Conditions: 150 mM KOAc, 10 mM MgCl2 and 150 mM bicine (pH 8.5), 24 C. An RNA of 177 nucleotides, treated with 2A3 and DMS and read out base by base. For DMS the reverse transcriptase was MarathonRT. Values are in units of 0.01, from 0 to 300, in steps of 10. For DMS, 2,939 sequencing reads were counted. Reactivities are given for positions 27 through 126.
RNA sequence: GGGAACGACUCGAGUAGAGUCGAAAACCCAGACCGUUCGCGGUCUGGGAAAACCGGAAUAAACAUGGGCCCAUGAGCCGAACCGGAAGGGCGUCCCCCCAAAAACUUGUGUCUUCGGACACAAGAACAUACGAUUUACCUUCGGGUAAAUCGUAUGAAAAGAAACAACAACAACAAC
Reactivity to 2A3 in 0.01 (KOAc 150mM, MgCl2 10mM, bicine 150mM(pH8.5), 24C), signal-to-noise 3, nucleotides 027 to 126: c020c000c000a000g000a000c010c000g000u060u070c220g000c010g120g010u000c000u000g000g000g000a030a040a000a020c010c010g010g050a110a160u200a110a110a030c100a210u150g040g010g020c010c050c090a180u200g010a030g030c010c050g030a040a040c020c010g010g000a070a040g090g000g000c020g080u020c000c010c030c000c000c000a030a050a010a020a020c010u000u000g010u010g000u000c000u030u030c160g090g000a000c000a000c000a000a000g020a000a000
Reactivity to DMS in 0.01 (KOAc 150mM, MgCl2 10mM, bicine 150mM(pH8.5), 24C), signal-to-noise 3, nucleotides 027 to 126: c010c000c000a010g010a020c010c000g010u000u020c160g030c010g030g020u020c000u000g000g000g000a020a000a070a120c000c000g020g010a110a110u000a070a080a090c160a120u010g010g010g000c000c010c170a130u000g010a110g010c000c010g000a080a070c010c010g000g010a100a050g000g000g000c040g000u000c000c000c000c000c000c010a080a060a050a060a100c010u000u000g000u000g000u000c000u000u010c180g010g000a040c000a000c000a000a000g000a120a160